[RMDB]
RNA sequence: GGGAACGACUCGAGUAGAGUCGAAAAUAAUAACCAGUGAGCCCUACAACAGCAGGCCGAUGGGCUGGGCAAGGGGUCUUUAGCGCAAGUUGAAGGCUCCCGGCUGUAGGGUCAUACACAUCGGCUGGCCUGGUACCGGGCACCUUGGUAUCAGGCGGUAAGAUUAAGUGUUCGCACUUAAUCUUACAAAAGAAACAACAACAACAAC
Reactivity to 2A3 in 0.01 (KOAc 150mM, MgCl2 10mM, bicine 150mM(pH8.5), 24C), signal-to-noise 3, nucleotides 027 to 156: u140a020a000u100a040a050c020c000a020g050u040g130a020g010c010c010c000u010a010c020a240a010c010a040g020c010a030g020g060c010c000g020a020u030g010g080g010c010u030g010g030g010c060a070a050g040g000g000g000u010c000u000u010u010a020g000c000g000c070a180a050g000u010u010g020a000a000g000g010c000u060c000c020c000g030g000c020u010g000u000a010g000g020g000u030c010a020u180a040c140a000c010a040u020c000g000g000c010u050g060g030c000c000u000g000g000u000a000c000c010g030g100g050c120a130c050c040u070u260g000g000u010a000u000c000a000g010g000c010g010
Reactivity to DMS in 0.01 (KOAc 150mM, MgCl2 10mM, bicine 150mM(pH8.5), 24C), signal-to-noise 1, nucleotides 027 to 156: u010a040a100u010a110a110c010c000a060g010u010g020a280g000c000c010c000u000a030c020a050a060c010a270g000c020a290g000g010c000c020g010a090u000g020g030g040c010u000g020g010g000c090a140a030g010g000g050g010u000c000u000u000u000a020g020c000g000c290a080a180g030u000u000g010a020a030g030g000c000u010c010c010c000g020g050c010u000g030u010a050g020g020g000u000c000a060u000a080c050a030c050a040u000c000g000g030c030u000g020g000c000c030u010g000g030u000a000c000c000g020g000g030c140a030c080c020u020u030g020g000u000a030u000c010a010g010g030c000g010